[RMDB]
RNA sequence: GGGAACGACUCGAGUAGAGUCGAAAAGGACACAGGUUCCGUGCAGGACAGAAGGACACAGGCCCAGGGUGUGGGGCAAAUAGGUGAAAUGCCCCCCAGGCAGGGUACAUUCCUCCACUGCCUGAGGGCACAACACCCGUUUCGACGGGUGUUGUGCAAAAGAAACAACAACAACAAC
Reactivity to DMS in 0.01 (KOAc 150mM, MgCl2 10mM, bicine 150mM(pH8.5), 24C), signal-to-noise 2, nucleotides 027 to 126: g000g010a090c100a170c120a120g000g010u000u000c020c010g040u000g000c050a050g030g000a090c090a070g010a120a100g000g000a090c080a050c160a100g010g000c030c030c010a060g020g000g010u000g010u000g010g020g000g010c080a010a050a120u010a070g000g030u000g000a070a070a110u010g020c030c010c000c000c030c030a010g000g000c010a040g000g010g000u000a060c140a070u000u000c040c000u000c040c040a120c020u000g000c000c000u000g000a080g000g010
Reactivity to 2A3 in 0.01 (KOAc 150mM, MgCl2 10mM, bicine 150mM(pH8.5), 24C), signal-to-noise 1, nucleotides 027 to 126: g080g030a020c040a040c030a150g100g100u090u030c030c000g000u070g050c030a040g000g050a040c000a060g120a130a010g080g000a000c010a010c040a110g020g070c000c020c030a000g060g020g040u130g030u020g020g000g000g000c040a060a080a010u180a070g020g040u100g100a030a040a110u090g000c000c000c010c000c040c000a000g000g010c010a000g050g000g000u030a090c030a120u150u080c030c040u010c040c000a220c040u010g000c000c000u000g000a100g020g050
An RNA of 177 nucleotides, treated with DMS and 2A3 and read out base by base. The reactions ran in a buffer of 150 mM KOAc, 10 mM MgCl2 and 150 mM bicine (pH 8.5), at 24 C. The 2A3 profile rests on 1,252 reads. Source: RMDB library OK2TST, as collected in RNAgym.